This 207-nucleotide RNA was probed chemically with 2A3. 2A3 adducts were read by reverse transcription with SuperScript II with manganese. The reactions ran in a buffer of 150 mM KOAc, 10 mM MgCl2 and 150 mM bicine (pH 8.5), at 24 C. The 2A3 profile rests on 1,002 reads.
RNA sequence: GGGAACGACUCGAGUAGAGUCGAAAACAGGUCGAUAGUACCAAUAACCCUGGUACCAAUAAGGUACUAUCGACCAUUUAGCUCUUCUUCUACAACACGCUCGCUGAAGAAGAGCAUUUCUGGUACCAGGGCAGCGAGCGUAAGGCCGAGAGGCCGACACGACGUAUAGCUUCGGCUAUACGUCGUGAAAAGAAACAACAACAACAAC
Reactivity to 2A3 in 0.01 (KOAc 150mM, MgCl2 10mM, bicine 150mM(pH8.5), 24C), signal-to-noise 1, nucleotides 027 to 156: c020a010g000g060u010c020g000a000u000a000g030u050a030c020c060a150a090u210a080a050c030c000c000u010g000g010u010a000c010c000a100a160u220a260a040g010g030u010a010c000u010a010u000c010g000a000c000c020a010u020u010u130a000g000c000u010c010u010u000c000u070u020c020u100a070c030a150a060c030a050c030g020c010u000c000g000c000u000g000a010a000g000a000a000g000a030g000c010a000u010u140u000c070u040g000g000u000a000c000c000a000g010g000g000c000a000g020c000g000a010g000c010g000u000a020a050g000g000c000c000g090a050g000a010g080g000c000c000g000a000